[RMDB]
RNA sequence: GGGAACGACUCGAGUAGAGUCGAAAAACCAGCCGCGUCGACGACGUCCACCGGCGACCUAUAGUAGGCAAAUCAGGUCUGUCUGGACGCCUGGUAUAAUCUCGUCUUUCAUGAACCGCCUGUGGUGGGCGCUUCGGAGGUUCGCCUCCGGAGCGCCAAAAGAAACAACAACAACAAC
Reactivity to 2A3 in 0.01 (KOAc 150mM, MgCl2 10mM, bicine 150mM(pH8.5), 24C), signal-to-noise 1, nucleotides 027 to 126: a000c000c010a000g080c080c080g000c000g040u000c010g050a110c040g000a000c000g010u000c000c000a000c000c040g000g000c010g000a060c000c000u110a040u070a230g300u020a000g160g060c010a000a000a130u130c000a000g000g090u000c000u110g130u040c050u240g200g000a050c050g000c010c000u000g000g000u070a080u200a090a060u040c000u000c020g090u060c020u020u160u150c060a140u240g040a000a000c050c000g000c060c040u220g000u040g000g000u120g120